Chemical mapping of a 207-nucleotide RNA with 2A3. High 2A3 reactivity points to a flexible backbone, as in loops and unpaired stretches. 2A3 adducts were read by reverse transcription with SuperScript II with manganese.
RNA sequence: GGGAACGACUCGAGUAGAGUCGAAAAAGUAUUGGAGUUUGAUGAUAUAGUGACACAGACUCAUAGAGCAAUUUCGCAAGUUGUUAAGCAAGCCAAAGACAAUAGUGUGUGGAUUAAAAUUCUUACGUAUUCUGCUAUUGAUGUGGAAGAAUUUCAAGUACGCUAAUCAGUUCGCUGAUUAGCGUACAAAAGAAACAACAACAACAAC
Reactivity to 2A3 in 0.01 (KOAc 150mM, MgCl2 10mM, bicine 150mM(pH8.5), 24C), signal-to-noise 1, nucleotides 027 to 156: a000g100u070a090u050u090g050g020a010g010u000u000u120g230a290u070g080a070u030a060u040a230g210u110g030a010c040a000c000a040g040a060c000u030c040a030u100a040g140a030g000c010a070a190u000u070u140c040g040c030a000a130g040u060u020g020u020u020a000a040g040c030a000a070g000c000c000a050a110a000g100a030c000a030a090u000a110g000u030g070u090g030u030g090g020a010u000u160a010a070a040a070u070u120c040u000u010a010c020g050u010a030u260u000c010u060g070c010u000a040u130u270g000a060u070g000u060g020g040a110a000g020a070a000u000u060u060c060a070a000
Reactivities are rounded to 0.1 and cut off at 0 and 3. The data come from the RNA Mapping Database (RMDB), library OK3TST.